[RMDB]
RNA sequence: GGGAACGACUCGAGUAGAGUCGAAAAAGGGAUGACUAUAUUUCUGGGAGCGAACUCCGGGCGAAUAUGAAGCGCAUGGAUACAAGUUAUGCCUUGGAAUGAAAGACAAUUCCGAAUCCGCUUUGUCCGCUCGGCUAAACUUCGGUUUAGCCGAGCGAAAAGAAACAACAACAACAAC
Reactivity to 2A3 in 0.01 (KOAc 150mM, MgCl2 10mM, bicine 150mM(pH8.5), 24C), signal-to-noise 1, nucleotides 027 to 126: a020g060g000g090a000u060g000a000c120u070a030u060a000u210u130u010c080u020g000g070g000a070g070c060g000a040a010c000u000c010c000g000g030g000c000g000a270a110u300a090u180g110a140a000g000c000g050c010a000u000g030g040a060u240a110c020a010a090g050u160u080a060u060g000c000c000u000u000g000g000a000a000u000g010a180a000a000g030a070c120a150a010u000u060c000c000g000a000a010u000c000c000g130c250u000u000u000g000u130c120